Description
The data come from the RNA Mapping Database (RMDB), library M2PK90. Chemical mapping of a 177-nucleotide RNA with 2A3 and DMS. For 2A3 the reverse transcriptase was SuperScript II with manganese. Reactivities are given for positions 27 through 126. Reactivities are rounded to 0.1 and cut off at 0 and 3.

RNA sequence: GGGAACGACUCGAGUAGAGUCGAAAAGUUGCCGACGAACCUUCCAACCUUCCAAACGUCGUUUUCGACAACCUUCCAACCUUCCAAUCUACUCGAGAGGAGGAGGAGGAGGAGGAGGAGGUAUUAACUCGUGCAUAAAAUUCGUUUUAUGCACGAGAAAAGAAACAACAACAACAAC
Reactivity to 2A3 in 0.01 (KOAc 150mM, MgCl2 10mM, bicine 150mM(pH8.5), 24C), signal-to-noise 3, nucleotides 027 to 126: g050u040u080g120c020c010g000a080c030g030a080a070c010c000u000u070c030c040a110a110c040c000u090u000c000c000a080a070a070c080g020u000c000g000u070u040u070u110c010g010a020c030a090a060c010c000u100u010c050c030a110a140c030c020u100u060c020c010a100a140u010c020u070a090c060u060c070g050a040g000a010g050g030a050g000g030a020g000g030a040g000g000a060g000g070a010g020g020a060g000g070a010g040g030u020a090u080u140a050a010
Reactivity to DMS in 0.01 (KOAc 150mM, MgCl2 10mM, bicine 150mM(pH8.5), 24C), signal-to-noise 3, nucleotides 027 to 126: g010u000u000g010c060c030g020a110c090g020a060a070c050c050u000u010c020c020a100a190c060c000u000u000c000c040a050a090a150c160g010u000c010g000u010u000u000u000c010g020a020c020a100a110c070c020u020u010c030c040a080a060c040c050u000u020c020c020a120a260u000c020u010a020c060u000c020g010a020g000a250g000g000a090g000g010a180g000g000a130g000g000a160g010g020a110g010g000a230g000g000a050g010g000u000a060u010u010a090a160
Conditions: 150 mM KOAc, 10 mM MgCl2 and 150 mM bicine (pH 8.5), 24 C.